An RNA of 177 nucleotides, treated with DMS and read out base by base.
The RNA was probed in 150 mM KOAc, 10 mM MgCl2 and 150 mM bicine (pH 8.5) at 24 C.
RNA sequence: GGGAACGACUCGAGUAGAGUCGAAAAUCUUGUUAACAUUGAUUCCCAAUGUGCGGUCCUAAGUGAUGCUUCUUACAAGAAAUCAGGUGAGAUAUUGAUUUAGUACAUGAAGGCUCUGACAGGGGAAAUCAACCUAUCCAUUCGUGGAUAGGUUGAUAAAAGAAACAACAACAACAAC
Reactivity to DMS in 0.01 (KOAc 150mM, MgCl2 10mM, bicine 150mM(pH8.5), 24C), signal-to-noise 3, nucleotides 027 to 126: u010c070u000u000g000u010u000a090a070c100a080u010u000g020a130u000u000c010c020c000a170a110u010g020u000g000c080g020g040u000c010c010u010a070a220g010u000g000a080u010g010c050u000u000c040u000u000a080c070a040a100g010a030a090a060u010c050a090g040g020u000g000a060g000a080u010a090u000u000g000a040u000u000u000a030g010u000a060c090a030u000g000a170a090g000g000c070u000c020u000g010a060c060a110g000g020g000g010a050a110